The data come from the RNA Mapping Database (RMDB), library OK2TRN.
Structure probing data (2A3 and DMS) for a 177-nucleotide construct.
DMS adducts were read by reverse transcription with MarathonRT.
The DMS profile rests on 1,487 reads.
The RNA was probed in 150 mM KOAc, 10 mM MgCl2 and 150 mM bicine (pH 8.5) at 24 C.

RNA sequence: GGGAACGACUCGAGUAGAGUCGAAAAGACGGAAGACAUGCUCGCAGUCUGGAACAGAGUGUGGAUUGAGGAGAAUGAGUGGAUGGAAGACAAAACACCAGUUGAGAGGUGGAGUGAUGUUCCAUACGCCGGUGAUUGUAUUCGUACAAUCACCGGCAAAAGAAACAACAACAACAAC
Reactivity to 2A3 in 0.01 (KOAc 150mM, MgCl2 10mM, bicine 150mM(pH8.5), 24C), signal-to-noise 1, nucleotides 027 to 126: g160a010c090g080g050a000a070g030a040c010a000u070g010c010u020c030g030c000a010g020u000c030u010g000g030a040a000c020a030g080a010g070u140g010u070g000g050a120u010u110g040a040g010g070a020g010a040a070u110g010a000g020u050g060g040a010u020g060g020a010a000g060a070c040a050a120a020a000c040a050c010c050a060g040u170u190g130a160g000a030g050g030u020g020g000a000g040u080g000a070u100g010u020u020c000c010a000u000a080c130
Reactivity to DMS in 0.01 (KOAc 150mM, MgCl2 10mM, bicine 150mM(pH8.5), 24C), signal-to-noise 2, nucleotides 027 to 126: g030a150c050g020g000a050a120g020a080c060a090u000g010c030u000c030g000c070a090g010u000c050u000g000g000a080a110c100a100g010a060g020u000g000u010g020g040a100u000u020g000a100g000g020a100g020a100a060u000g000a080g030u000g000g000a070u010g010g010a070a060g000a040c120a010a050a130a090c090a040c030c010a060g010u000u000g010a100g000a070g000g030u000g000g010a110g000u000g020a080u000g000u000u000c010c020a090u010a090c250